[RMDB]
An RNA of 177 nucleotides, treated with 2A3 and read out base by base. It was measured as part of the RMDB library OK1LIB.
RNA sequence: GGGAACGACUCGAGUAGAGUCGAAAAUCGUGAGAUGUGGUGCCUCACGCGCUCGAGGCGUCCGUGGUCAGAGAGACCACUGACGCAAAAACUCGAGCGCAAAUAAAUAGCAUUACAUCCAGAAUAACCGCAGGAUUACGUUCGCGUAAUCCUGCGGAAAAGAAACAACAACAACAAC
Reactivity to 2A3 in 0.01 (KOAc 150mM, MgCl2 10mM, bicine 150mM(pH8.5), 24C), signal-to-noise 1, nucleotides 027 to 126: u140c080g030u060g110a250g010a010u000g010u000g020g010u000g000c000c000u150c010a130c060g000c000g020c000u000c000g000a000g000g090c010g000u030c000c000g010u000g010g000u000c080a090g220a090g020a000g020a300c020c000a000c000u000g000a000c000g000c000a050a060a060a060a060c000u000c000g010a000g000c020g000c000a000a000a000u020a000a090a000u120a010g000c000a000u000u000a000c000a010u000c000c010a020g000a080a100u120a090a000